The data come from the RNA Mapping Database (RMDB), library OK2TST. The record gives the reactivity of an RNA of 177 nucleotides to DMS and 2A3. The RNA was probed in 150 mM KOAc, 10 mM MgCl2 and 150 mM bicine (pH 8.5) at 24 C. For 2A3, 794 sequencing reads were counted. For 2A3 the reverse transcriptase was SuperScript II with manganese.
[RMDB]
RNA sequence: GGGAACGACUCGAGUAGAGUCGAAAAGUUUGGGGGUCAAGUGCCUGGAGAGCCAGUAUCAAUGUGGCGAUGGAAGCUGCAUCUCCGGCUACAAGCGCUGCAAUGGCAUCCACGAUUGCGCCGAUGACUCCUCGGAGUCAUUCGUGACUCCGAGGAGAAAAGAAACAACAACAACAAC
Reactivity to DMS in 0.01 (KOAc 150mM, MgCl2 10mM, bicine 150mM(pH8.5), 24C), signal-to-noise 2, nucleotides 027 to 126: g010u020u030u020g010g030g000g000g040u010c030a100a140g010u010g000c000c030u010g020g000a010g000a160g000c050c040a060g010u000a130u000c290a090a130u000g030u000g000g000c010g010a140u000g010g020a130a170g000c010u000g000c160a130u000c050u010c170c020g010g020c020u000a050c030a030a080g010c070g000c020u010g010c010a040a100u000g000g000c060a150u000c050c010a050c130g000a160u010u010g000c100g020c000c040g000a120u010g010a070
Reactivity to 2A3 in 0.01 (KOAc 150mM, MgCl2 10mM, bicine 150mM(pH8.5), 24C), signal-to-noise 1, nucleotides 027 to 126: g080u130u130u180g020g030g010g000g010u000c050a080a060g020u030g050c000c040u030g030g000a090g000a030g120c000c000a030g050u050a020u300c050a050a060u070g000u010g060g010c030g000a020u020g100g000a130a000g070c020u030g000c010a140u000c180u050c170c060g000g030c000u000a010c060a140a060g090c010g010c020u010g010c010a050a120u030g010g030c000a000u000c000c000a050c110g030a050u000u200g010c020g000c010c000g040a030u110g040a050